Overview
An RNA of 177 nucleotides, treated with DMS and 2A3 and read out base by base. Values cover nucleotides 27 to 126. 2A3 is a SHAPE reagent: it acylates the 2'-hydroxyl of flexible nucleotides of all four kinds. The RNA was probed in 150 mM KOAc, 10 mM MgCl2 and 150 mM bicine (pH 8.5) at 24 C. It was measured as part of the RMDB library OK2TRN.
[RMDB]
RNA sequence: GGGAACGACUCGAGUAGAGUCGAAAAUAUAUAAUGCCGUAAUUAGCCGUAAUCGCGCGUAGCGCUACGUAGCAUAUCGCGUAGCCGUAGCAUGCAUUAUAUACGCGUAAUAUAUAUCGAUGCAUUACGCAUCGGGAAAAUUCGUUUUCCCGAUGCGAAAAGAAACAACAACAACAAC
Reactivity to DMS in 0.01 (KOAc 150mM, MgCl2 10mM, bicine 150mM(pH8.5), 24C), signal-to-noise 4, nucleotides 027 to 126: u010a030u000a030u000a010a040u000g000c020c080g010u000a080a070u000u000a120g020c130c190g010u000a090a060u010c100g020c040g050c040g000u010a200g010c130g010c010u000a010c010g020u000a120g020c170a090u010a070u000c080g020c000g000u000a020g020c090c050g040u000a110g010c060a090u000g020c040a030u000u000a030u010a110u000a040c120g020c080g020u000a030a040u000a080u010a090u000a080u010c060g010a070u000g010c040a110u000u000a080
Reactivity to 2A3 in 0.01 (KOAc 150mM, MgCl2 10mM, bicine 150mM(pH8.5), 24C), signal-to-noise 3, nucleotides 027 to 126: u090a000u010a010u000a020a040u030g000c010c020g050u030a060a140u090u140a080g110c080c050g050u050a060a060u090c060g000c000g000c030g070u060a030g010c040g000c080u010a000c020g020u020a030g060c080a120u120a060u300c070g020c010g040u010a010g000c030c000g000u000a010g010c020a020u090g010c000a020u040u080a030u050a010u030a060c030g000c020g060u050a060a020u090a040u000a000u000a020u120c020g060a060u060g030c020a020u050u120a040